[RMDB]
RNA sequence: GGGAACGACUCGAGUAGAGUCGAAAAUCAAAAUGGGAGUGUGAUCCGGCUGCAUGGGCCAGAGAGGGUGUCCGCGACUUGAAAGAUCGCUUCAAAGAAGAAAAGAAUGAUCAGGAGACACCUAUCCUCCUGAUAUGUCGUUCGCGACAUAUCAGGAAAAAGAAACAACAACAACAAC
Reactivity to 2A3 in 0.01 (KOAc 150mM, MgCl2 10mM, bicine 150mM(pH8.5), 24C), signal-to-noise 1, nucleotides 027 to 126: u110c030a020a000a020a050u120g000g020g000a080g040u100g020u090g090a060u000c010c010g040g000c020u050g010c050a260u190g050g040g100c100c010a020g020a010g020a020g090g050g000u050g020u020c030c030g040c030g070a040c020u020u020g020a000a030a000g000a040u000c000g030c010u030u050c090a160a130a060g050a050a000g090a090a230a050a000g080a030a060u100g010a090u090c020a000g140g070a120g000a020c010a050c000c000u000a060u010c000c010
Reactivity to DMS in 0.01 (KOAc 150mM, MgCl2 10mM, bicine 150mM(pH8.5), 24C), signal-to-noise 2, nucleotides 027 to 126: u000c060a080a070a100a110u000g000g000g000a030g030u010g010u020g000a100u000c060c050g010g010c070u010g000c120a070u010g020g010g030c030c050a080g010a060g000a110g000g010g010u000g010u000c020c080g000c050g010a030c050u000u000g030a080a150a140g000a050u000c010g010c000u000u010c030a060a120a150g010a050a070g000a040a030a100a100g010a080a050u000g010a050u010c020a100g020g000a090g000a040c020a020c000c020u000a110u020c060c060

The record gives the reactivity of an RNA of 177 nucleotides to 2A3 and DMS.
For DMS the reverse transcriptase was MarathonRT.
For 2A3, 676 sequencing reads were counted.